[RMDB]
RNA sequence: GGGAACGACUCGAGUAGAGUCGAAAAAAGCAGGAGCAGCUGUUCAGUGUGGUGGCAACCGGCGCCGCGAGCUUGCUCACGGUGGACAUGGACGUCCAGGUCACCAUGCCGGUGCCCGAGCCGAUGGCAGUAUGCUUCGAUUCGUCGAAGCAUACUGAAAAGAAACAACAACAACAAC
Reactivity to DMS in 0.01 (KOAc 150mM, MgCl2 10mM, bicine 150mM(pH8.5), 24C), signal-to-noise 6, nucleotides 027 to 126: a080a020g020c040a090g000g010a070g000c050a070g000c030u000g010u000u010c060a090g020u020g010u010g000g030u020g010g000c020a080a060c030c030g010g030c020g000c000c000g010c070g000a010g000c030u030u010g010c010u000c000a040c020g000g000u010g010g000a030c050a110u020g010g000a230c200g000u030c020c000a110g010g000u010c050a090c120c060a070u030g010c040c040g000g010u000g010c020c000c040g000a090g010c030c040g000a090u030g000g000
Reactivity to 2A3 in 0.01 (KOAc 150mM, MgCl2 10mM, bicine 150mM(pH8.5), 24C), signal-to-noise 8, nucleotides 027 to 126: a000a000g080c070a040g010g040a050g010c040a010g010c030u050g040u110u090c020a090g030u030g040u070g120g120u130g040g000c020a090a080c020c000g020g010c010g000c010c000g010c010g000a010g000c060u150u220g030c000u020c010a010c010g010g020u030g020g020a010c030a100u140g130g040a050c080g050u040c030c020a010g000g090u070c030a030c070c010a040u130g040c020c020g010g000u010g000c000c010c000g030a010g010c000c020g040a070u070g070g010

Source: RMDB library OK1LIB, as collected in RNAgym. This 177-nucleotide RNA was probed chemically with DMS and 2A3. For DMS, 17,352 sequencing reads were counted. For DMS the reverse transcriptase was MarathonRT. For 2A3 the reverse transcriptase was SuperScript II with manganese. Reactivities are given for positions 27 through 126. For 2A3, 9,754 sequencing reads were counted.